[RMDB]
RNA sequence: GGGAACGACUCGAGUAGAGUCGAAAAACCUUUGUGUUAGCGGAUGUAUAGGGAGCCUGUAAACCAUCCCAUUGGGAUGGGAAGAAGGGCGAGGAUCUAUACGGAUGCUAACACUCUGGUAAACCCCCUUUAUGUUCUUCGGAACAUAAAGGGGGAAGAUAGAAGGAACGUUCGCGUUCCUUCUAUCAAAAGAAACAACAACAACAAC
Reactivity to DMS in 0.01 (KOAc 150mM, MgCl2 10mM, bicine 150mM(pH8.5), 24C), signal-to-noise 1, nucleotides 027 to 156: a080c000c000u000u000u000g040u030g000u010u000a010g090c000g000g010a300u000g010u000a020u000a040g030g000g030a060g030c010c000u000g020u000a070a190a300c010c000a010u000c000c010c050a110u000u000g080g020g010a030u000g000g000g000a020a090g000a220a300g000g000g050c040g020a060g040g010a080u030c000u000a000u000a030c000g000g000a300u000g000c000u000a000a030c000a000c000u000c000u000g000g010u000a000a130a130c010c000c000c000c020u000u000u020a020u000g030u000u010c000u000u010c300g080g030a040a000c000a000u000a000a010a040g000g060g020g000g000a000a000
Reactivity to 2A3 in 0.01 (KOAc 150mM, MgCl2 10mM, bicine 150mM(pH8.5), 24C), signal-to-noise 2, nucleotides 027 to 156: a000c000c000u000u010u010g000u000g000u020u000a000g000c010g000g010a020u030g020u000a000u000a000g000g000g000a010g010c020c040u040g050u020a000a000a000c010c010a020u000c030c040c070a200u220u300g010g000g000a000u000g000g000g000a040a090g010a000a010g010g000g010c000g000a040g000g000a000u000c000u000a000u000a010c000g010g000a010u030g000c000u000a000a000c000a000c000u000c000u000g010g000u010a130a070a090c010c000c000c000c020u000u010u000a010u010g010u000u000c000u010u040c210g120g000a000a000c000a000u000a000a010a000g010g000g000g000g000a000a010